Chemical mapping of a 207-nucleotide RNA with 2A3 and DMS.
Source: RMDB library OK3TST, as collected in RNAgym.
The DMS profile rests on 2,415 reads.
RNA sequence: GGGAACGACUCGAGUAGAGUCGAAAAUAAAAAAUAUAACUUCGUCUAAUAAUCCCUGUAAAGCUCCACCAUAAACAGGAUCCAUAAAAUAUAUCGGGUGAUCUGGAGUGUUACCUGAUGGGAUUGUGGUGGAUAUAGUGCCUUUACUUACACCGUCGAAUAUAGUCACAUUCGUGUGACUAUAUUCAAAAGAAACAACAACAACAAC
Reactivity to 2A3 in 0.01 (KOAc 150mM, MgCl2 10mM, bicine 150mM(pH8.5), 24C), signal-to-noise 4, nucleotides 027 to 156: u090a020a030a010a010a030a020u200a060u040a130a070c060u120u090c060g060u000c040u070a110a140u040a100a090u190c020c010c040u040g050u030a040a030a000g050c040u010c010c010a000c010c010a020u080a090a140a040c040a070g140g020a040u010c000c000a060u120a270a100a160a010u260a060u040a010u060c010g000g010g010u010g010a000u020c050u150g120g040a050g010u160g020u010u020a000c000c000u000g010a020u050g060g000g000a020u020u040g010u010g020g000u010g000g000a030u040a020u020a080g040u020g010c010c000u030u100u090a040c000u050u060a040c060a020c110c040g240u220c080
Reactivity to DMS in 0.01 (KOAc 150mM, MgCl2 10mM, bicine 150mM(pH8.5), 24C), signal-to-noise 1, nucleotides 027 to 156: u040a020a050a190a180a110a070u020a090u010a060a110c000u010u030c020g000u000c050u000a070a040u000a170a050u010c020c000c000u000g020u000a060a050a150g000c090u010c010c020a040c050c010a050u000a090a080a160c080a140g000g000a080u000c040c010a170u010a000a060a100a100u020a130u020a050u000c000g070g010g040u010g010a040u000c040u010g030g020a180g010u000g010u000u010a010c020c060u010g060a030u000g010g020g020a090u000u000g040u000g040g000u000g010g010a140u010a050u000a070g040u000g000c050c050u020u000u000a120c090u000u000a060c070a070c030c000g000u000c090